[RMDB]
Conditions: 150 mM KOAc, 10 mM MgCl2 and 150 mM bicine (pH 8.5), 24 C. An RNA of 177 nucleotides, treated with DMS and 2A3 and read out base by base. Source: RMDB library TTRDEL, as collected in RNAgym. Values cover nucleotides 27 to 126.

RNA sequence: GGGAACGACUCGAGUAGAGUCGAAAAGAUAUGGAACUCGUAGAGACACUACCCACCGCUAAUCGGAAACGAUAGCGAGGUGUGUAGAGUUCCUAAGUCAAAACGCGUGCUGUUCGCAGCACGCGAAUCAUGCUUGUACCUUCGGGUACAAGCAUGAAAAAGAAACAACAACAACAAC
Reactivity to DMS in 0.01 (KOAc 150mM, MgCl2 10mM, bicine 150mM(pH8.5), 24C), signal-to-noise 1, nucleotides 027 to 126: g010a010u010a300u000g000g000a010a000c000u010c010g010u000a120g010a280g030a040c010a010c000u020a080c010c000c040a280c130c010g000c000u000a070a070u000c000g010g010a070a140a160c020g000a010u000a000g000c000g000a020g010g040u000g020u010g010u000a070g000a020g000u000u000c000c020u000a020a080g000u010c080a100a040a060a240c040g000c010g000u000g000c000u000g000u010u000c300g000c000a020g040c000a000c000g000c000g010a010a050
Reactivity to 2A3 in 0.01 (KOAc 150mM, MgCl2 10mM, bicine 150mM(pH8.5), 24C), signal-to-noise 1, nucleotides 027 to 126: g020a010u080a040u160g000g010a020a020c010u000c050g120u300a130g080a020g050a300c010a000c020u230a070c030c010c050a200c110c030g000c000u060a300a240u030c020g060g000a160a010a030c000g000a010u020a000g000c000g000a010g000g050u020g010u000g000u000a030g000a010g020u000u030c000c000u000a060a010g070u050c020a110a000a020a080c030g000c020g010u000g000c020u010g090u100u150c300g010c090a000g000c030a000c020g000c010g000a010a010